[RMDB]
RNA sequence: GGGAACGACUCGAGUAGAGUCGAAAACGGAUAUCUCAGCGGUUCGGUCGACGUGGUGUUACGGAUUCCCGACGGGCCGGGCCAGCGGUAUCUGGUCGUCGACUACAAGACCAACUGGCUGGGUGACCCAGUGGCCACCAUUCGUGGUGGCCACUGGAAAAGAAACAACAACAACAAC
Reactivity to 2A3 in 0.01 (KOAc 150mM, MgCl2 10mM, bicine 150mM(pH8.5), 24C), signal-to-noise 1, nucleotides 027 to 126: c000g050g000a020u030a000u250c000u000c000a010g140c010g000g000u090u230c160g000g000u000c000g020a170c260g010u080g000g000u130g100u150u150a040c060g000g010a110u200u220c000c020c030g010a040c060g000g000g030c110c000g020g000g020c000c000a000g000c000g080g090u090a150u100c000u000g040g000u000c000g000u010c000g040a010c000u020a010c050a080a050g000a000c000c010a000a000c000u070g300g000c000u000g000g000g000u020g020a030c000